Chemical mapping of a 177-nucleotide RNA with DMS and 2A3. Values cover nucleotides 27 to 126.
RNA sequence: GGGAACGACUCGAGUAGAGUCGAAAAUCAAAGUAGCAUAUUAAUAAUCGUCUUAUGCUACUGGGAGUCUGUGUAGAUAGUUACUACACAGACUCCAGUAGUCAGUAGAGUAAGACGUCUGACUGCAGAUAGUAUUGGCAUUCGUGUCGAUACUAUCAAAAGAAACAACAACAACAAC
Reactivity to DMS in 0.01 (KOAc 150mM, MgCl2 10mM, bicine 150mM(pH8.5), 24C), signal-to-noise 8, nucleotides 027 to 126: u030c070a080a090a070g010u020a020g000c020a030u010a110u010u010a080a080u020a120a110u040c100g010u000c010u010u000a010u020g010c000u000a010c000u000g000g010g000a010g010u000c000u000g000u000g010u000a000g010a080u010a140g010u030u070a040c010u000a000c000a000c010a000g000a000c000u000c000c000a020g010u010a080g010u090c030a030g010u010a050g010a120g030u020a070a060g000a080c070g000u000c090u010g000a070c070u000g020c040a110
Reactivity to 2A3 in 0.01 (KOAc 150mM, MgCl2 10mM, bicine 150mM(pH8.5), 24C), signal-to-noise 9, nucleotides 027 to 126: u080c010a010a010a020g020u020a000g020c010a010u030a020u100u100a090a080u100a060a080u080c010g010u000c010u000u000a000u010g010c000u000a000c000u000g030g020g000a010g000u000c000u000g000u000g000u000a000g010a060u030a050g090u100u130a010c000u000a000c000a000c000a000g000a000c000u000c000c000a000g000u010a000g010u010c020a010g020u040a020g020a020g060u040a030a010g000a000c010g020u000c010u020g050a040c010u010g000c010a030
For 2A3, 62,672 sequencing reads were counted.